Source: RMDB library M2PK50, as collected in RNAgym. Structure probing data (DMS and 2A3) for a 177-nucleotide construct. The reactions ran in a buffer of 150 mM KOAc, 10 mM MgCl2 and 150 mM bicine (pH 8.5), at 24 C. DMS adducts were read by reverse transcription with MarathonRT.

[RMDB]
RNA sequence: GGGAACGACUCGAGUAGAGUCGAAAAAGUUUCCAAUUCGUUGGAAACUACUGUCGGAAUGCGGAAUAUAAAAUCCUCCGCUAAAGGAUUUUACCGACUUAAAGUACACUAGUUUCGACUAGUGUAAGUAGAGAAUAGUCUUCGGACUAUUCUCUACAAAAGAAACAACAACAACAAC
Reactivity to DMS in 0.01 (KOAc 150mM, MgCl2 10mM, bicine 150mM(pH8.5), 24C), signal-to-noise 2, nucleotides 027 to 126: a300g010u000u000u000c000c000a000a020u000u020c150g010u000u000g000g000a010a000a000c000u000a070c050u000g020u000c000g010g010a180a110u000g030c040g020g020a060a040u000a130u010a130a100a100a090u000c180c060u000c060c020g020c070u000a050a110a090g000g000a110u010u010u000u000a090c000c000g000a020c010u000u000a050a080a150g010u000a010c000a000c000u010a010g000u000u010u010c200g000a030c000u000a000g010u000g000u000a000a120
Reactivity to 2A3 in 0.01 (KOAc 150mM, MgCl2 10mM, bicine 150mM(pH8.5), 24C), signal-to-noise 1, nucleotides 027 to 126: a010g010u020u000u030c000c000a000a010u070u070c160g080u020u000g010g000a000a000a010c010u000a030c020u040g020u020c010g000g060a170a000u110g070c040g010g120a110a050u100a020u050a130a180a040a070u060c020c010u000c000c000g000c060u040a130a090a000g060g010a040u230u060u020u080a080c000c010g040a020c000u020u120a150a220a050g010u010a000c000a000c010u000a010g010u000u080u060c190g080a010c010u000a000g020u010g000u000a000a040